[RMDB]
Structure probing data (2A3) for a 177-nucleotide construct. The RNA was probed in 150 mM KOAc, 10 mM MgCl2 and 150 mM bicine (pH 8.5) at 24 C. Source: RMDB library OK1LIB, as collected in RNAgym. For 2A3, 438 sequencing reads were counted.

RNA sequence: GGGAACGACUCGAGUAGAGUCGAAAAGCAGUUUUCUAUCACACGUUCGAAAGCCCCUUUGAAAAGCUGCCAACGUGACCUUACGUUCUGAUAAAUAACCACCAAAUUACCAAUAAUUCUAAUAGUAACUCAGCAGUGCAUUCGUGCACUGCUGAGUAAAAGAAACAACAACAACAAC
Reactivity to 2A3 in 0.01 (KOAc 150mM, MgCl2 10mM, bicine 150mM(pH8.5), 24C), signal-to-noise 1, nucleotides 027 to 126: g000c050a000g000u020u030u030u020c060u050a160u300c140a070c000a000c130g050u200u000c100g070a100a050a100g040c000c000c000c010u000u010u030g090a090a090a000a000g000c080u000g000c020c020a000a010c000g030u000g060a090c020c000u020u020a010c040g140u100u000c020u130g060a010u030a040a270a000u190a020a000c010c000a000c000c030a040a000a170u300u030a160c000c000a020a000u240a000a050u130u010c000u160a130a020u110a100g090u110a180